This 177-nucleotide RNA was probed chemically with DMS and 2A3. As a SHAPE reagent, 2A3 marks flexible, mostly unpaired nucleotides at the ribose 2'-OH. The reactions ran in a buffer of 150 mM KOAc, 10 mM MgCl2 and 150 mM bicine (pH 8.5), at 24 C. For DMS the reverse transcriptase was MarathonRT.
RNA sequence: GGGAACGACUCGAGUAGAGUCGAAAAGCAAAGAAAUUUUAUCCCAAUAAGGCGAAGCGUGCAAGUCGAAUAAAGCUAAUGCUGCUAGCGAGCACGCGAGCCCUAGCAGACACCUAGCGAGAAAAAACAUAUAACGUUGGUUCGCCAACGUUAUAUGAAAAGAAACAACAACAACAAC
Reactivity to DMS in 0.01 (KOAc 150mM, MgCl2 10mM, bicine 150mM(pH8.5), 24C), signal-to-noise 7, nucleotides 027 to 126: g010c130a030a050a080g000a060a050a120u010u000u000u000a130u010c000c000c010a130a130u010a070a100g000g010c010g010a090a170g010c010g030u000g000c020a130a180g010u010c080g000a080a100u010a060a100a080g020c010u000a070a090u000g020c060u000g010c110u000a060g000c050g010a260g010c010a010c030g010c020g010a210g010c030c010c030u000a030g000c030a040g000a080c120a050c130c090u000a040g000c060g000a110g020a010a040a040a060a080a110
Reactivity to 2A3 in 0.01 (KOAc 150mM, MgCl2 10mM, bicine 150mM(pH8.5), 24C), signal-to-noise 6, nucleotides 027 to 126: g040c030a040a060a080g150a070a190a060u100u150u080u080a080u080c010c000c010a010a060u130a060a010g010g000c010g060a070a020g000c000g000u000g000c030a070a070g100u080c030g080a060a070u180a190a110a010g000c020u050a130a050u260g060c070u030g000c000u010a010g020c010g040a020g010c000a000c000g020c000g000a000g000c000c010c000u000a010g020c010a010g040a070c010a030c050c060u060a020g020c030g050a050g140a070a090a020a020a010a000